[RMDB]
This 177-nucleotide RNA was probed chemically with 2A3 and DMS. Conditions: 150 mM KOAc, 10 mM MgCl2 and 150 mM bicine (pH 8.5), 24 C. The 2A3 profile rests on 4,088 reads. The data come from the RNA Mapping Database (RMDB), library TTRDES.
RNA sequence: GGGAACGACUCGAGUAGAGUCGAAAAGAUAUGGACACGAACGACAUGAUGACUGGUCGGAAACGACCGUCCAUCAACAGCGUUUCGUGUCCUAAGUCAAACGUUAGCUUGUUCGCAAGCUAACGAACUAUCUGCGUGUCUUCGGACACGCAGAUAGAAAAGAAACAACAACAACAAC
Reactivity to 2A3 in 0.01 (KOAc 150mM, MgCl2 10mM, bicine 150mM(pH8.5), 24C), signal-to-noise 3, nucleotides 027 to 126: g010a000u020a020u040g000g010a000c010a010c010g000a000a010c000g120a040c190a300u300g010a000u000g000a010c110u300g000g030u000c010g010g000a010a010a010c000g000a000c000c000g040u010c090c030a000u010c030a130a300c080a130g010c000g000u080u160u200c010g020u020g000u020c000c000u000a000a000g000u000c000a130a000a050c020g010u010u000a000g000c010u000u000g010u080u070c300g020c210a000a000g000c010u000a010a000c000g000a050a040
Reactivity to DMS in 0.01 (KOAc 150mM, MgCl2 10mM, bicine 150mM(pH8.5), 24C), signal-to-noise 2, nucleotides 027 to 126: g000a020u000a020u020g000g020a030c000a020c010g020a020a010c000g020a030c060a270u000g010a010u000g000a080c030u010g070g000u000c020g020g010a010a010a050c020g030a000c010c010g000u000c120c100a050u010c010a140a100c300a190g000c000g010u000u000u030c010g000u010g000u000c000c000u000a000a030g000u000c010a130a140a300c040g010u000u000a000g020c010u000u000g030u000u040c240g030c010a020a000g000c000u010a000a000c000g020a060a080